Overview
Structure probing data (2A3 and DMS) for a 177-nucleotide construct. The RNA was probed in 150 mM KOAc, 10 mM MgCl2 and 150 mM bicine (pH 8.5) at 24 C. Source: RMDB library OK1LIB, as collected in RNAgym. 2A3 adducts were read by reverse transcription with SuperScript II with manganese.
RNA sequence: GGGAACGACUCGAGUAGAGUCGAAAAGUGCUGGCGGCUCGGCGGUGGUGGCCGCCGAGACGACGGCCAUCGUCUCGCGGACGGCUCGAACUUCGUCGUUGAAAGCCGCGGCUACCGGCGAGGGCGCGAUACAGAAGAUAUUCGUAUCUUCUGUAUCAAAAGAAACAACAACAACAAC
Reactivity to 2A3 in 0.01 (KOAc 150mM, MgCl2 10mM, bicine 150mM(pH8.5), 24C), signal-to-noise 9, nucleotides 027 to 126: g160u170g010c010u020g050g020c000g000g000c000u000c010g010g000c040g010g020u070g050g240u170g210g010c000c000g000c000c000g000a000g000a000c000g010a000c000g020g000c000c000a050u060c010g020u000c010u010c030g020c040g030g040a130c030g030g000c020u030c070g070a110a080c020u080u060c050g060u020c020g040u050u090g100a150a060a010g020c020c010g030c050g050g010c010u050a070c020c010g050g000c010g010a040g020g040g010c090g000c060
Reactivity to DMS in 0.01 (KOAc 150mM, MgCl2 10mM, bicine 150mM(pH8.5), 24C), signal-to-noise 7, nucleotides 027 to 126: g010u040g010c000u000g010g010c010g000g010c000u000c010g010g010c010g010g020u000g020g040u040g010g010c000c010g010c010c000g010a010g000a010c010g000a000c020g010g000c040c030a050u020c040g010u000c010u010c030g020c050g000g010a140c070g000g000c040u000c040g010a110a110c040u010u010c110g010u010c100g000u010u020g000a100a110a070g000c030c010g020c160g010g000c040u000a080c060c040g000g010c020g000a050g010g010g000c080g010c210